[RMDB]
RNA sequence: GGGAACGACUCGAGUAGAGUCGAAAACCAGGAUGGUCUCAAUCUCCUGACCUCGUGAUCUGCCCGUCUCGGCCUCCCAAAGUGCUGGGAUUACAGGUGUGAGCCACUGCGCCUGACCAAAAUUCCAAAGUUCUAUGUGAAGCCCUAUUUUACAUGAGCACUGCAUACUAUUCGUAGUAUGCAGUGCAAAAGAAACAACAACAACAAC
Reactivity to 2A3 in 0.01 (KOAc 150mM, MgCl2 10mM, bicine 150mM(pH8.5), 24C), signal-to-noise 1, nucleotides 027 to 156: c020c000a070g080g000a110u090g000g050u060c050u050c160a130a090u070c030u030c140c000u020g050a070c010c000u080c090g140u090g050a160u000c030u050g000c000c060c000g070u030c050u030c050g010g010c030c120u010c000c020c010a110a180a000g140u090g050c030u050g030g000g000a000u000u060a070c040a030g000g000u010g030u040g100a000g040c000c000a040c050u060g020c020g020c000c000u030g030a200c000c000a030a000a270a100u090u030c020c000a070a110a000g040u030u030c000u020a040u080g030u020g060a100a000g020c000c120c040u050a210u070u080u060u050a060c100a040u180g110a000

Chemical mapping of a 207-nucleotide RNA with 2A3. The reactions ran in a buffer of 150 mM KOAc, 10 mM MgCl2 and 150 mM bicine (pH 8.5), at 24 C. The data come from the RNA Mapping Database (RMDB), library OK3TST. 2A3 is a SHAPE reagent: it acylates the 2'-hydroxyl of flexible nucleotides of all four kinds.